Background
Structure probing data (2A3 and DMS) for a 177-nucleotide construct. For 2A3, 13,098 sequencing reads were counted. The RNA was probed in 150 mM KOAc, 10 mM MgCl2 and 150 mM bicine (pH 8.5) at 24 C. 2A3 adducts were read by reverse transcription with SuperScript II with manganese. DMS adducts were read by reverse transcription with MarathonRT. Values cover nucleotides 27 to 126. The DMS profile rests on 3,688 reads.

[RMDB]
RNA sequence: GGGAACGACUCGAGUAGAGUCGAAAACAGAAUACAUGAUGAUCUCAAUCCAACUUGAACUCUCUCACUGAUUACUUGAUGACAAUAAAAUAUCUGAUAUUCUGAAAGUCGCUACUUCGGUAGCGACGCCUACAUUUUACUUCGGUAAAAUGUAGGCAAAAGAAACAACAACAACAAC
Reactivity to 2A3 in 0.01 (KOAc 150mM, MgCl2 10mM, bicine 150mM(pH8.5), 24C), signal-to-noise 9, nucleotides 027 to 126: c010a010g030a050a030u070a060c040a050u140g010a030u040g060a080u040c020u010c040a020a070u020c030c030a030a060c050u040u080g030a070a030c010u030c000u000c010u020c100a050c070u060g050a170u090u140a070c040u070u080g030a050u110g030a050c030a040a070u120a170a130a050a030u130a040u010c020u020g050a080u030a060u120u020c010u020g070a140a090a030g000u010c000g000c000u000a010c000u020u050c140g060g000u000a000g000c000g000a000c000
Reactivity to DMS in 0.01 (KOAc 150mM, MgCl2 10mM, bicine 150mM(pH8.5), 24C), signal-to-noise 4, nucleotides 027 to 126: c030a050g010a070a020u010a040c040a050u010g010a030u000g000a090u000c030u000c030a090a060u000c090c070a080a110c080u010u000g010a060a090c090u010c040u010c070u000c060a080c140u000g020a090u000u000a070c110u000u000g000a070u010g010a040c110a070a110u010a060a040a070a070u010a040u000c020u000g000a130u000a030u000u010c010u000g000a080a090a220g010u000c000g010c010u020a000c000u000u010c130g020g000u000a000g020c000g000a000c020